[RMDB]
RNA sequence: GGGAACGACUCGAGUAGAGUCGAAAACAAUGGUAAAGAGGCGAAGAACCUCGGAGGUUCCCUCCCAAGAAGGUUCAAGAGAAUACAAGAAAUGGAGGAAUUUCCCCAUAACGCCGGUGAAACUCUUUCUUAUGUAAUUGUUCGCAAUUACAUAAGAAAAAGAAACAACAACAACAAC
Reactivity to 2A3 in 0.01 (KOAc 150mM, MgCl2 10mM, bicine 150mM(pH8.5), 24C), signal-to-noise 1, nucleotides 027 to 126: c020a010a090u110g000g000u120a110a080a000g060a010g040g010c020g070a100a010g020a090a090c010c000u000c020g020g000a010g000g040u030u010c030c000c000u020c000c020c000a000a030g030a000a000g010g020u010u000c030a100a020g090a010g050a260a060u090a180c060a150a020g070a100a110a030u130g000g000a040g050g050a030a060u060u020u010c000c000c010c030a000u020a030a030c050g060c040c020g080g000u110g040a070a040a010c010u080c010u010u020
Reactivity to DMS in 0.01 (KOAc 150mM, MgCl2 10mM, bicine 150mM(pH8.5), 24C), signal-to-noise 2, nucleotides 027 to 126: c180a080a050u020g020g030u040a050a150a180g020a050g000g010c040g000a140a110g020a110a080c000c000u000c030g010g010a040g010g020u000u000c100c020c000u000c050c000c080a040a100g000a210a070g010g000u000u010c030a200a120g000a100g000a040a030u010a050c060a100a220g000a040a070a030u010g000g020a050g010g000a100a080u010u000u000c000c010c010c070a070u010a100a100c160g010c010c040g000g010u000g010a080a120a070c010u000c010u000u000